[RMDB]
RNA sequence: GGGAACGACUCGAGUAGAGUCGAAAAAAGCCGAGCCACGGUUCGACCACGGUGUCGAUAUAGAGCGCGCCGCAUUCGCGGACAAAGCGCAUCAGGUCGAGCGAGCUUGUAUCGACGGAAAGAUUGAGCCAUAGUAGCUGUUCGCAGCUACUAUGGCAAAAGAAACAACAACAACAAC
Reactivity to DMS in 0.01 (KOAc 150mM, MgCl2 10mM, bicine 150mM(pH8.5), 24C), signal-to-noise 1, nucleotides 027 to 126: a090a090g010c040c020g010a090g010c060c000a150c090g000g020u000u000c060g020a050c040c000a210c140g020g000u010g000u000c000g000a010u000a050u000a040g010a030g010c040g000c040g000c010c000g000c010a160u020u000c140g020c000g010g030a130c080a060a050a180g020c000g020c080a140u010c190a080g010g010u010c000g010a190g050c100g000a050g000c060u000u010g010u000a040u000c000g020a110c040g000g010a040a100a070g000a160u000u000g010a230
Reactivity to 2A3 in 0.01 (KOAc 150mM, MgCl2 10mM, bicine 150mM(pH8.5), 24C), signal-to-noise 1, nucleotides 027 to 126: a010a020g050c020c030g020a040g110c020c000a050c020g060g020u020u040c030g020a060c010c000a100c080g080g000u120g020u140c010g010a000u010a000u020a070g160a010g050c020g020c000g040c040c000g000c030a100u250u210c090g010c000g000g000a030c150a070a120a040g030c010g000c000a040u080c050a020g020g040u130c000g010a000g010c000g000a000g000c010u020u010g010u020a050u060c010g010a020c010g110g010a080a130a060g090a070u120u220g040a040
Record summary: This 177-nucleotide RNA was probed chemically with DMS and 2A3. Values cover nucleotides 27 to 126. The RNA was probed in 150 mM KOAc, 10 mM MgCl2 and 150 mM bicine (pH 8.5) at 24 C.